[RMDB]
RNA sequence: GGGAACGACUCGAGUAGAGUCGAAAACUUUGGCGUCGCUAUUGUAAUACAUAAAUACACACGCGAUGGUAAACUUGAACGUAUAAUAUAUUACGAUUACGAUGGCCGGCCAAUUAAGGGCGAAUAUCUCGACUCGAAAAUGAUUAUACAUUAUCGAGAAUAUUAGGUUGUUCGCAACCUAAUAUUCAAAAGAAACAACAACAACAAC
Reactivity to DMS in 0.01 (KOAc 150mM, MgCl2 10mM, bicine 150mM(pH8.5), 24C), signal-to-noise 2, nucleotides 027 to 156: c060u000u000u000g070g050c010g020u000c010g030c020u000a070u000u010g010u000a040a050u000a030c090a090u000a040a100a130u000a210c040a150c040a050c070g010c020g030a240u010g000g010u000a090a160a140c020u000u000g010a140a080c040g040u020a070u010a080a080u000a060u000a080u000u000a040c040g000a030u000u000a030c020g000a040u010g000g000c060c000g010g030c060c040a050a060u000u000a070a100g010g000g020c060g000a090a140u000a090u000c030u000c010g000a080c060u000c040g030a030a050a020a040u010g000a120u000u000a110u000a050c020a010u000u000a120u000c030g000a300
Reactivity to 2A3 in 0.01 (KOAc 150mM, MgCl2 10mM, bicine 150mM(pH8.5), 24C), signal-to-noise 4, nucleotides 027 to 156: c070u140u070u080g030g000c000g000u020c020g030c020u010a000u010u030g010u000a010a010u020a080c060a030u150a090a280a020u110a040c080a010c000a020c070g090c060g110a120u090g040g030u120a080a100a100c050u080u110g040a090a020c030g010u030a040u030a190a030u050a030u010a020u060u050a010c000g010a010u020u040a010c010g000a010u020g080g000c010c010g010g050c020c010a030a070u180u120a080a040g050g010g000c030g010a100a050u060a120u090c050u000c050g080a080c030u010c040g020a080a090a030a030u060g030a050u050u190a070u130a130c060a050u090u140a090u160c030g030a030
Notes: This 207-nucleotide RNA was probed chemically with DMS and 2A3. The 2A3 profile rests on 1,990 reads. Source: RMDB library OK3TST, as collected in RNAgym. Reactivities are given for positions 27 through 156. The reactions ran in a buffer of 150 mM KOAc, 10 mM MgCl2 and 150 mM bicine (pH 8.5), at 24 C.